This 177-nucleotide RNA was probed chemically with DMS and 2A3.
For DMS, 3,065 sequencing reads were counted.
DMS adducts were read by reverse transcription with MarathonRT.
It was measured as part of the RMDB library OK2TRN.
The RNA was probed in 150 mM KOAc, 10 mM MgCl2 and 150 mM bicine (pH 8.5) at 24 C.

[RMDB]
RNA sequence: GGGAACGACUCGAGUAGAGUCGAAAAAGGGAGAGACCGUGCGCCCGAUGCUGGAUGUGGCGUGGGCCCCGAUGCUGGGCGCUUUCUCGGUGCUCUUUGAGGAGUUCACAGAAGGGACGACGGUGAAGUCCACAUACUCUUUCGAGAGUAUGUGGACAAAAGAAACAACAACAACAAC
Reactivity to DMS in 0.01 (KOAc 150mM, MgCl2 10mM, bicine 150mM(pH8.5), 24C), signal-to-noise 3, nucleotides 027 to 126: a070g000g000g010a080g010a070g010a060c050c060g020u000g020c030g010c010c000c010g010a060u010g010c030u000g020g010a110u010g030u010g040g000c030g010u010g030g000g010c000c010c010c020g000a100u000g010c040u000g010g000g020c010g010c030u010u000u010c110u010c030g000g020u000g010c010u000c000u010u010u010g000a150g010g000a120g000u000u000c050a070c050a130g010a150a070g000g010g010a060c080g000a110c050g000g000u000g000a080a120
Reactivity to 2A3 in 0.01 (KOAc 150mM, MgCl2 10mM, bicine 150mM(pH8.5), 24C), signal-to-noise 2, nucleotides 027 to 126: a000g070g000g000a080g000a000g010a020c000c040g020u040g000c040g050c000c020c050g210a300u200g010c000u020g060g140a250u060g120u250g050g000c090g040u100g060g290g000c010c000c000c000g000a030u060g010c020u020g030g010g000c000g000c000u020u160u000c060u010c020g020g030u050g080c010u010c030u030u000u060g020a060g010g000a000g040u040u100c070a050c000a120g130a080a080g040g000g030a040c020g010a010c010g040g030u060g060a080a020